[RMDB]
Chemical mapping of a 207-nucleotide RNA with 2A3. 2A3 adducts were read by reverse transcription with SuperScript II with manganese. For 2A3, 435 sequencing reads were counted. The reactions ran in a buffer of 150 mM KOAc, 10 mM MgCl2 and 150 mM bicine (pH 8.5), at 24 C.
RNA sequence: GGGAACGACUCGAGUAGAGUCGAAAAUUUGAACUUUGCAACUUUGCCGUGGUAGACCAACAGUAACCAUAAAUGAUGAGUAAAUGAAGGGGUGUGAUUGCAUUCUAACAAAUUUUAUUUACAAAAACAAGCAAUGGGCCAUAUUUUGCUGAUCCCAACGAUAAAAUCGGUUCGCCGAUUUUAUCGUAAAAGAAACAACAACAACAAC
Reactivity to 2A3 in 0.01 (KOAc 150mM, MgCl2 10mM, bicine 150mM(pH8.5), 24C), signal-to-noise 1, nucleotides 027 to 156: u140u080u040g040a030a010c000u100u110u070g020c000a020a120c070u120u290u120g010c040c000g050u020g080g000u030a040g000a080c050c000a050a050c080a120g030u020a020a150c040c000a060u060a110a220a080u270g080a060u030g000a020g090u100a060a160a170u060g010a050a040g000g000g000g020u110g010u000g000a100u080u000g020c120a070u120u020c030u030a110a080c010a100a140a020u060u130u000u080a070u010u120u130a000c010a000a210a000a020a030c080a030a000g000c020a040a040u030g010g010g010c000c000a040u020a030u030u130u040u070g000c000u020g000a020u000c010c000c000a000